[RMDB]
RNA sequence: GGGAACGACUCGAGUAGAGUCGAAAAUGAAGUUCUGGGAGAUUGGCGAUAUUUUGCACGAUGAAUACAACUGGAUGAAGUGAUUUCCGUCGGUAGCGUCGUACAUCCCAAGUCAUCGACCAAUUGGACACACUAGGUACUUCGGUACCUAGUGUGUAAAAGAAACAACAACAACAAC
Reactivity to 2A3 in 0.01 (KOAc 150mM, MgCl2 10mM, bicine 150mM(pH8.5), 24C), signal-to-noise 2, nucleotides 027 to 126: u060g010a030a010g090u110u120c110u170g010g070g000a050g000a030u120u140g040g000c000g000a000u000a050u230u030u040u040g070c020a010c030g000a000u020g030a180a050u060a070c030a080a010c090u100g060g030a080u090g090a170a050g170u150g160a120u040u000u040c040c010g010u020c050g050g000u050a010g000c010g040u000c000g000u020a010c000a030u010c000c030c000a010a000g060u040c020a020u030c020g060a140c000c000a000a040u120u160g090g000
Reactivity to DMS in 0.01 (KOAc 150mM, MgCl2 10mM, bicine 150mM(pH8.5), 24C), signal-to-noise 3, nucleotides 027 to 126: u000g010a080a150g020u020u010c100u000g000g000g000a180g000a090u000u000g020g000c020g000a060u010a060u010u000u000u000g010c050a080c010g020a030u010g000a060a040u000a040c110a090a030c020u010g050g000a080u010g010a120a160g030u010g000a140u010u000u000c020c000g010u000c090g000g000u000a030g000c010g010u000c000g020u010a040c050a040u000c020c030c010a090a070g010u000c090a050u010c030g000a180c020c010a080a110u000u010g020g000
Source: RMDB library OK2TST, as collected in RNAgym.
This 177-nucleotide RNA was probed chemically with 2A3 and DMS.
DMS adducts were read by reverse transcription with MarathonRT.
Conditions: 150 mM KOAc, 10 mM MgCl2 and 150 mM bicine (pH 8.5), 24 C.